[RMDB]
Structure probing data (DMS and 2A3) for a 207-nucleotide construct. For 2A3, 12,288 sequencing reads were counted. Values cover nucleotides 27 to 156. Conditions: 150 mM KOAc, 10 mM MgCl2 and 150 mM bicine (pH 8.5), 24 C. For 2A3 the reverse transcriptase was SuperScript II with manganese.

RNA sequence: GGGAACGACUCGAGUAGAGUCGAAAAGCGUACUACCAAAGAGGUAAGGGCGAAUCGAUACUCCCCACCGUGAUCCCAAAUAGGAUCACGAGGUAUCGAAACCCUUACUACCCACCUUUGGUAUCGCAAAACAAUACUAGCUUCGGCUAGUAUUGAAUCUAACUGAAUAGUUCGCUAUUCAGUUAGAAAAAGAAACAACAACAACAAC
Reactivity to DMS in 0.01 (KOAc 150mM, MgCl2 10mM, bicine 150mM(pH8.5), 24C), signal-to-noise 4, nucleotides 027 to 156: g030c040g040u000a070c090u010a010c000c000a010a030a020g010a140g010g020u000a010a010g010g000g020c010g000a170a120u010c000g000a040u000a040c000u010c200c130c030c060a300c250c010g000u000g000a020u010c000c000c000a070a190a230u000a060g000g010a030u000c000a020c000g000a100g030g000u000a020u000c010g020a010a070a010c000c000c000u000u000a020c010u010a020c010c030c030a300c120c000u000u020u010g000g000u000a020u000c020g000c010a130a070a060a180c000a030a020u000a000c000u000a010g000c010u000u000c300g040g000c000u000a000g010u000a000u000u000g010a130a120
Reactivity to 2A3 in 0.01 (KOAc 150mM, MgCl2 10mM, bicine 150mM(pH8.5), 24C), signal-to-noise 7, nucleotides 027 to 156: g010c010g030u070a090c020u000a000c020c000a010a010a000g020a010g030g000u000a000a010g030g010g000c120g100a040a090u020c010g000a000u000a000c020u090c040c050c020c000a020c030c000g000u000g000a000u020c020c020c050a160a300a060u300a100g000g000a000u000c000a000c000g000a010g010g000u010a000u000c000g000a100a030a040c000c000c000u010u010a000c000u010a010c020c030c010a100c010c000u020u000u010g010g020u030a060u300c010g000c000a030a060a010a020c000a000a000u000a000c000u000a000g020c010u040u060c290g120g000c000u000a000g000u000a000u000u000g000a010a020